[RMDB]
Structure probing data (DMS and 2A3) for a 177-nucleotide construct.
RNA sequence: GGGAACGACUCGAGUAGAGUCGAAAACGUCGUGAACUAGCGACAAUGCAAUAGAUCCAUCGUUAUCUAACCGAAACAUCGUGACUAGUCGUAGAAUAGAACCAGGAGAGGACGCUGGCAAACAAAGACGGGGUGUUAGAUUCGUCUAACGCCCCGUAAAAGAAACAACAACAACAAC
Reactivity to DMS in 0.01 (KOAc 150mM, MgCl2 10mM, bicine 150mM(pH8.5), 24C), signal-to-noise 4, nucleotides 027 to 126: c180g030u000c040g050u010g000a110a120c190u030a160g000c030g000a030c020a080a060u020g000c100a060a090u030a050g000a050u010c030c040a060u010c060g050u000u010a070u030c060u000a040a110c080c010g010a090a040a100c160a040u040c040g000u010g000a080c040u000a110g010u010c010g000u020a080g020a060a050u010a070g000a080a080c060c040a100g010g000a080g020a050g000g020a020c030g030c030u010g010g000c120a070a070a100c110a070a110a080g000
Reactivity to 2A3 in 0.01 (KOAc 150mM, MgCl2 10mM, bicine 150mM(pH8.5), 24C), signal-to-noise 3, nucleotides 027 to 126: c020g000u000c000g000u030g120a170a060c060u030a070g000c010g020a000c040a020a040u120g010c030a000a050u010a050g010a030u010c010c010a040u020c090g050u090u030a030u060c050u040a000a100c020c010g060a080a020a040c000a050u060c030g040u030g030a060c070u030a050g040u020c050g060u050a010g070a090a050u050a050g050a060a020c010c010a010g050g010a100g020a040g000g030a000c010g000c030u020g010g010c010a030a090a080c030a050a150a000g110

For DMS, 6,071 sequencing reads were counted. Reactivities are given for positions 27 through 126.